Chemical mapping of a 177-nucleotide RNA with DMS and 2A3. Values cover nucleotides 27 to 126.
RNA sequence: GGGAACGACUCGAGUAGAGUCGAAAAAGCAGAAGAUGAUGAUGACGUUUUUGAACCGGCAUCUCCAAAUACAUUGAAAGUCCAUCAGCUGCCUUGAUCAGAGAGAGAAUUCAGGUUACCAAGACGGUCCCAUAAGAUGCUUCGGCAUCUUAUGGGAAAAAGAAACAACAACAACAAC
Reactivity to DMS in 0.01 (KOAc 150mM, MgCl2 10mM, bicine 150mM(pH8.5), 24C), signal-to-noise 2, nucleotides 027 to 126: a010g020c010a040g010a110a080g030a030u010g040a080u000g000a130u000g010a050c070g000u010u010u000u010u000g010a120a090c140c010g020g010c090a100u000c000u000c080c040a020a010a080u080a140c190a090u010u010g040a080a080a120g020u000c070c020a040u000c020a010g000c000u020g040c020c030u000u010g020a090u040c110a110g000a090g020a070g000a040g010a060a040u020u000c070a030g000g000u000u050a070c070c030a120a070g000a090c090g020g000
Reactivity to 2A3 in 0.01 (KOAc 150mM, MgCl2 10mM, bicine 150mM(pH8.5), 24C), signal-to-noise 2, nucleotides 027 to 126: a000g110c110a040g030a230a100g040a040u120g000a000u040g010a000u010g000a040c030g040u000u000u060u190u180g040a020a080c000c050g000g030c000a010u000c010u050c010c000a040a020a040u300a070c100a130u100u300g210a120a000a000g030u000c010c000a040u000c000a010g000c030u000g000c000c010u020u050g000a010u080c100a040g060a000g010a020g000a000g040a250a000u040u090c000a030g000g000u050u050a100c040c000a030a020g040a030c020g050g170
Background: DMS adducts were read by reverse transcription with MarathonRT. Reactivities are rounded to 0.1 and cut off at 0 and 3.